[RMDB]
RNA sequence: GGGAACGACUCGAGUAGAGUCGAAAAGCAUUGCUGACCUAUGCAAGACUAACAGCAUGGCGAGAACGGUUGAAAUUCUGCCUUGGUAGCUUUUUAAUGCAUGCCAAGUCAGGUAUUCACUUUGCAACCCUCUAUCAUCGUUCGCGAUGAUAGAGGGAAAAGAAACAACAACAACAAC
Reactivity to DMS in 0.01 (KOAc 150mM, MgCl2 10mM, bicine 150mM(pH8.5), 24C), signal-to-noise 2, nucleotides 027 to 126: g000c090a120u010u010g000c010u000g020a180c270c020u000a080u000g010c090a060a100g020a170c130u000a030a080c130a050g010c020a050u000g000g000c020g020a110g000a080a100c140g010g010u000u020g020a020a060a140u000u000c020u000g000c040c000u010u000g010g010u020a050g000c000u000u000u000u000u000a030a170u010g020c000a050u010g000c000c010a010a000g000u000c000a010g010g000u000a050u020u000c030a060c070u000u000u020g010c090a090a160
Reactivity to 2A3 in 0.01 (KOAc 150mM, MgCl2 10mM, bicine 150mM(pH8.5), 24C), signal-to-noise 2, nucleotides 027 to 126: g060c040a050u060u120g030c040u040g070a160c010c040u040a040u090g050c080a110a040g080a240c080u180a150a040c010a040g000c020a030u050g100g000c020g000a040g040a090a020c050g050g000u050u120g030a040a100a080u160u010c010u000g010c010c000u000u000g020g010u030a010g030c000u100u140u100u070u300a150a070u190g000c030a040u100g000c000c000a010a000g000u000c020a000g000g000u020a040u010u030c030a030c040u060u090u170g000c010a060a070